[RMDB]
RNA sequence: GGGAACGACUCGAGUAGAGUCGAAAAAGAUGGCACCAGGAGAAAUAGAGCCCCUGGCCAGUGUCCUGAGUCGUAGCAGUGCAGGAGGGGAGCCCUGAAGGAGAGAGCCUGCCUAAAUCGAUGCCUGGUCAAUUACAUACUUCGGUAUGUAAUUGACAAAAGAAACAACAACAACAAC
Reactivity to 2A3 in 0.01 (KOAc 150mM, MgCl2 10mM, bicine 150mM(pH8.5), 24C), signal-to-noise 1, nucleotides 027 to 126: a000g060a060u090g010g000c050a000c050c040a050g060g040a090g030a050a240a050u220a070g100a110g060c000c000c000c000u010g040g000c010c010a040g050u060g010u030c000c010u070g000a040g030u020c010g000u020a020g000c130a000g040u060g130c010a020g000g060a010g000g020g000g040a040g020c030c030c010u060g050a130a030g040g010a060g000a010g000a000g000c010c020u030g060c000c000u010a020a050a080u100c050g000a020u090g020c000c010u050g040
Reactivity to DMS in 0.01 (KOAc 150mM, MgCl2 10mM, bicine 150mM(pH8.5), 24C), signal-to-noise 1, nucleotides 027 to 126: a120g010a080u010g000g010c110a090c060c030a050g000g030a060g000a090a090a120u020a090g000a280g010c010c040c020c030u000g000g000c000c020a040g010u000g010u000c020c020u000g000a110g030u000c060g040u010a050g000c140a040g050u000g020c030a050g000g000a180g000g020g020g020a110g040c050c050c030u010g000a090a120g000g040a090g010a110g020a160g000c020c050u010g000c060c000u000a040a100a150u010c110g010a110u000g030c050c030u020g000
Chemical mapping of a 177-nucleotide RNA with 2A3 and DMS. The 2A3 profile rests on 1,340 reads. For DMS, 823 sequencing reads were counted. Reactivities are given for positions 27 through 126. The reactions ran in a buffer of 150 mM KOAc, 10 mM MgCl2 and 150 mM bicine (pH 8.5), at 24 C. It was measured as part of the RMDB library RFMREP.